[RMDB]
RNA sequence: GGGAACGACUCGAGUAGAGUCGAAAAGACCUUCAGUUCGCUGAAGGUCGAUGAUGCUAAGAGAGAUUACCAUCUGUUAAGUGAUAUGGAUAAGAUCUCUCAGUGAACGUGCUUUCGAGCACGUUAAUCUCUAGUACCCUUUCGAGGGUACUAGAGAAAAAGAAACAACAACAACAAC
Reactivity to DMS in 0.01 (KOAc 150mM, MgCl2 10mM, bicine 150mM(pH8.5), 24C), signal-to-noise 4, nucleotides 027 to 126: g000a000c000c000u000u000c010a000g020u000u010c250g030c000u000g010a020a010g000g020u000c000g010a030u010g010a100u000g010c060u000a100a080g010a010g000a010g010a090u000u000a090c070c080a020u000c030u000g010u000u010a070a180g020u010g010a060u000a030u000g000g000a090u000a060a060g000a100u000c000u000c000u000c020a070g020u000g010a050a020c000g000u000g000c000u000u000u020c170g010a030g010c000a000c000g010u000u000a040a120
Reactivity to 2A3 in 0.01 (KOAc 150mM, MgCl2 10mM, bicine 150mM(pH8.5), 24C), signal-to-noise 3, nucleotides 027 to 126: g000a000c000c000u010u000c010a000g020u020u120c130g000c100u000g010a000a000g000g000u000c000g000a000u010g000a000u030g010c050u160a270a000g000a000g000a000g010a010u000u040a050c020c030a010u010c020u050g100u220u150a180a120g130u120g160a100u080a040u170g010g020a060u010a100a080g000a050u000c000u000c000u000c000a000g020u030g060a020a010c000g000u000g000c000u030u030u120c200g060a000g000c010a000c000g000u000u010a010a020